[RMDB]
RNA sequence: GGGAACGACUCGAGUAGAGUCGAAAAAUGCGCGCAAUCGAAAACGCCCUGACCCUGAUCCUCGGCCUCCCGACGGGACCUGAGCGCGGCGAGGCGGCGACCCAUUCUCCCGUACGGUGGACGGGUGCGAAAACAGACAAUUCGUUGUCUGUUUUCGAAAAGAAACAACAACAACAAC
Reactivity to 2A3 in 0.01 (KOAc 150mM, MgCl2 10mM, bicine 150mM(pH8.5), 24C), signal-to-noise 3, nucleotides 027 to 126: a000u060g000c040g000c000g000c030a010a150u080c090g110a050a040a050a060c020g040c010c020c020u030g040a060c030c020c010u040g070a090u070c020c020u040c040g010g020c020c020u030c030c010c000g050a050c030g000g000g050a020c010c030u080g050a030g010c030g000c010g010g020c000g000a020g050g040c010g020g010c030g040a100c010c000c000a040u110u020c030u010c000c000c000g040u100a100c040g030g120u100g070g000a010c030g000g000g010u030g030
Reactivity to DMS in 0.01 (KOAc 150mM, MgCl2 10mM, bicine 150mM(pH8.5), 24C), signal-to-noise 5, nucleotides 027 to 126: a070u000g010c080g020c040g020c060a110a110u000c100g000a090a070a110a130c090g000c030c020c030u000g000a110c050c010c040u000g010a110u000c050c010u000c020g020g010c040c030u000c060c000c020g020a090c060g010g000g000a070c130c060u000g000a100g020c030g030c050g010g010c050g000a070g010g020c030g010g010c020g010a100c030c000c020a110u010u010c070u000c010c000c020g010u010a080c110g000g020u000g000g010a040c010g000g000g010u010g010